[RMDB]
RNA sequence: GGGAACGACUCGAGUAGAGUCGAAAAACGAGCUGGUGCCUACUACGGUACGCACCAGCUCGAGGGCCUUCUGGUCGUGUUCUUGGCCACCCAGGAGGUCCUUCGCAAGAGGUGGACGGCCAAGAAAAAAAGGACAGUGGGUUCGCCCACUGUCCAACCAAGUAGACGUGUUCGCACGUCUACUUGGAAAAGAAACAACAACAACAAC
Reactivity to 2A3 in 0.01 (KOAc 150mM, MgCl2 10mM, bicine 150mM(pH8.5), 24C), signal-to-noise 1, nucleotides 027 to 156: a000c020g000a000g000c000u000g010g000u000g020c030c010u010a020c010u030a040c170g100g000u000a000c010g000c020a000c000c000a000g000c000u000c000g010a000g000g000g000c010c000u000u000c000u000g050g030u120c110g040u050g000u010u020c000u000u000g000g000c000c000a000c010c000c000a000g010g000a000g010g000u000c000c000u040u050c000g030c030a130a030g030a040g160g100u200g060g120a050c070g060g000c000c020a000a010g010a010a000a000a000a000a000a000g000g000a000c000a000g000u000g010g060g000u030u100c130g070c010c010c000a000c000u000g000u000c000c000a000a000
The record gives the reactivity of an RNA of 207 nucleotides to 2A3. The reactions ran in a buffer of 150 mM KOAc, 10 mM MgCl2 and 150 mM bicine (pH 8.5), at 24 C. Values cover nucleotides 27 to 156.